[RMDB]
RNA sequence: GGGAACGACUCGAGUAGAGUCGAAAAUGCAGAGAAAUCACCUCCAGAGGACCCCUUCAGCGAACAGAACGAUCGCUUCACGCGGUGGGAGCAAGACCAUAGCGAUAGGAAGAGAUGCUAGGAGUUGCGGGCCGUAGAUUCGUCUACGGCAAAAGAAACAACAACAACAAC
Reactivity to 2A3 in 0.01 (KOAc 150mM, MgCl2 10mM, bicine 150mM(pH8.5), 24C), signal-to-noise 8, nucleotides 027 to 129: u130g020c040a000g010a010g040a120a070a060u090c020a060c020c010u020c010c020a020g010a030g050g030a050c020c000c000c000u050u090c040a020g000c000g040a040a020c010a070g080a080a030c050g030a040u050c020g010c020u100u110c080a050c100g050c020g030g000u050g030g020g000a070g040c040a050a010g060a040c000c010a040u070a020g030c010g040a050u050a060g040g010a030a010g010a000g000a010u080g030c020u050a040g010g030a040g020u040u080g060c070g030g050
Reactivity to DMS in 0.01 (KOAc 150mM, MgCl2 10mM, bicine 150mM(pH8.5), 24C), signal-to-noise 9, nucleotides 027 to 129: u040g030c070a080g050a090g030a080a080a050u020c050a120c030c000u030c050c070a070g020a020g050g000a080c110c010c010c000u010u050c120a020g000c000g000a060a060c060a110g000a060a070c150g030a060u020c010g020c000u020u020c090a120c140g000c000g000g050u000g000g010g010a100g040c100a060a070g010a020c000c030a010u010a110g020c050g030a000u040a020g000g000a070a040g010a050g020a000u010g000c060u040a000g000g000a080g030u000u000g040c110g010g010